Record summary
Structure probing data (2A3) for a 207-nucleotide construct. Values cover nucleotides 27 to 156. Source: RMDB library OK3TST, as collected in RNAgym.
RNA sequence: GGGAACGACUCGAGUAGAGUCGAAAACAAUGUGACAGUUUCAGUCUAGUAAUUGCAUAACUUAUGCUAUUUAUGAGUUUGAAGAUAUUUGAUAUAAUUCAACGUAUUUUAAUCUUUCGGAUUUCCUUUUUUAUGCAUUCCUUUUAAUAAAUGAGUACUAAUGCAUGGCUUUCGAGCCAUGCAUUAGAAAAGAAACAACAACAACAAC
Reactivity to 2A3 in 0.01 (KOAc 150mM, MgCl2 10mM, bicine 150mM(pH8.5), 24C), signal-to-noise 1, nucleotides 027 to 156: c050a010a070u140g010u070g040a000c020a010g010u010u060u070c040a020g010u000c000u050a060g020u040a050a070u060u010g020c040a040u010a060a140c040u080u100a050u110g040c040u050a110u040u080u020a060u130g020a000g050u030u050u080g040a010a000g000a020u050a160u110u160u000g060a000u020a000u010a230a160u200u040c020a040a040c020g000u000a020u010u080u000u010a050a060u000c000u010u220u000c040g050g020a000u080u020u120c030c000u130u040u000u000u000u070a020u010g000c000a020u030u050c020c080u080u170u060u110a110a060u300a090a020a300u200g000a000g000u150a000